[RMDB]
RNA sequence: GGGAACGACUCGAGUAGAGUCGAAAAAUCUUUUAUUUGGCGCUUGGGCUGGAAUAGUUGGCACCGCUCUUAGUCUACUAAUUCGAGCAGAACUAGGCCAACCAGGAACAUUACUAGGGGAUGAUCAAUCUUUCCAGUUUUUCGAAACUGGAAAGAUAAAAGAAACAACAACAACAAC
Reactivity to DMS in 0.01 (KOAc 150mM, MgCl2 10mM, bicine 150mM(pH8.5), 24C), signal-to-noise 3, nucleotides 027 to 126: a060u010c010u000u000u010u000a050u000u020u010g010g020c190g000c060u000u000g010g010g020c070u000g000g010a060a050u000a040g010u000u000g010g010c090a220c200c100g000c030u000c020u000u000a040g010u010c110u000a090c050u010a030a090u000u030c100g000a050g000c030a090g000a050a060c030u000a030g010g000c010c010a010a030c020c010a030g010g000a080a060c030a040u000u000a040c160u000a080g020g010g000g000a080u010g000a110u000c130a080
Reactivity to 2A3 in 0.01 (KOAc 150mM, MgCl2 10mM, bicine 150mM(pH8.5), 24C), signal-to-noise 1, nucleotides 027 to 126: a020u090c040u070u160u070u050a100u070u010u030g040g000c050g000c030u000u000g030g040g000c040u010g020g040a050a070u080a050g020u020u040g040g000c060a020c090c090g060c010u000c000u010u010a010g010u000c030u090a160c020u040a090a230u090u050c040g030a000g000c000a000g020a120a040c060u020a040g090g000c000c000a000a000c000c000a010g020g020a000a050c010a020u050u100a050c080u040a040g000g050g000g000a030u060g040a010u140c060a030

An RNA of 177 nucleotides, treated with DMS and 2A3 and read out base by base.
For 2A3 the reverse transcriptase was SuperScript II with manganese.
For DMS the reverse transcriptase was MarathonRT.
The DMS profile rests on 2,354 reads.